[RMDB]
RNA sequence: GGGAACGACUCGAGUAGAGUCGAAAACUGGCAUUCAGGGCCGUGGCGGACGAUCAGUUCGCGGCUCUUGCUGUCGGGCUAAAACUGCCCUGGAUAUGGGCAACGGUCUGGGCCGCCGCCGGCAUCGCAUGAGCAUAGGUUUCGACCUAUGCUCAUGAAAAGAAACAACAACAACAAC
Reactivity to 2A3 in 0.01 (KOAc 150mM, MgCl2 10mM, bicine 150mM(pH8.5), 24C), signal-to-noise 8, nucleotides 027 to 126: c020u050g070g010c050a140u130u110c110a150g060g030g000c000c010g020u050g040g020c000g020g000a060c050g050a100u090c040a020g010u040u040c010g000c000g010g000c010u050c010u080u240g010c020u040g110u170c010g010g020g010c020u110a020a010a060a100c060u050g000c000c030c010u020g090g090a130u130a110u300g010g000g000c000a010a010c020g000g000u000c030u100g030g240g020c000c010g010c000c010g020c040c040g020g000c030a110u120c080g030
Reactivity to DMS in 0.01 (KOAc 150mM, MgCl2 10mM, bicine 150mM(pH8.5), 24C), signal-to-noise 3, nucleotides 027 to 126: c020u010g000g010c090a090u020u000c060a080g000g000g010c000c030g010u020g030g020c030g000g000a120c030g000a070u040c040a040g000u000u020c010g000c040g000g000c000u050c110u000u030g000c090u000g010u020c030g000g010g010c040u010a070a040a090a130c140u000g010c000c000c000u000g000g000a130u060a040u020g010g010g000c000a030a050c080g010g020u000c010u020g040g000g010c000c010g000c000c000g000c070c020g000g030c010a030u030c070g020

About this RNA
Structure probing data (2A3 and DMS) for a 177-nucleotide construct. It was measured as part of the RMDB library OK1LIB. DMS (dimethyl sulfate) methylates the pairing face of unpaired adenines and cytosines. The 2A3 profile rests on 7,532 reads.